Record summary: The record gives the reactivity of an RNA of 207 nucleotides to 2A3 and DMS. For 2A3, 5,162 sequencing reads were counted. For DMS, 5,397 sequencing reads were counted. For 2A3 the reverse transcriptase was SuperScript II with manganese.
[RMDB]
RNA sequence: GGGAACGACUCGAGUAGAGUCGAAAACUGGGCGACGCACGACAGCCUGACCGACUUGCCGAACCGAACCGCGGUGCACGAGCUGCUCAGCGGGGCCGACAUGCGGGGCCUGGCGAUGCUGUACUGCGACAUCACCAACUUCCGGCGGAUCAACGAGCCAUACGUUUAAUUUCGAUUAAACGUAUGGAAAAGAAACAACAACAACAAC
Reactivity to 2A3 in 0.01 (KOAc 150mM, MgCl2 10mM, bicine 150mM(pH8.5), 24C), signal-to-noise 5, nucleotides 027 to 156: c040u040g000g030g000c050g040a050c030g030c030a040c070g090a050c050a020g010c000c020u050g030a070c020c020g060a080c040u050u080g010c020c010g050a100a060c030c000g030a050a030c030c000g010c020g030g020u020g020c020a020c080g080a040g050c090u060g000c020u040c040a020g010c000g010g020g030g000c020c010g080a110c040a100u190g040c100g040g020g010g000c000c020u030g020g020c020g030a050u100g000c010u050g020u080a110c040u060g030c030g050a040c020a080u060c020a010c060c000a040a080c020u100u040c010c010g060g000c070g010g050a070u060c030a050a060c030g040a020g040
Reactivity to DMS in 0.01 (KOAc 150mM, MgCl2 10mM, bicine 150mM(pH8.5), 24C), signal-to-noise 2, nucleotides 027 to 156: c030u000g010g020g000c010g030a160c030g040c030a110c030g010a100c050a100g010c010c030u000g030a090c070c030g020a040c030u020u000g010c030c030g010a090a120c050c010g020a110a140c010c060g030c070g010g000u000g020c030a100c040g020a240g010c120u000g010c010u010c020a100g000c030g020g000g020g000c040c010g000a060c040a110u000g000c020g000g020g000g010c040c020u000g040g000c000g010a110u020g020c020u010g020u000a100c140u000g020c000g010a040c020a040u000c010a050c000c020a040a130c080u000u020c000c040g000g000c050g000g000a120u000c030a050a120c030g000a220g010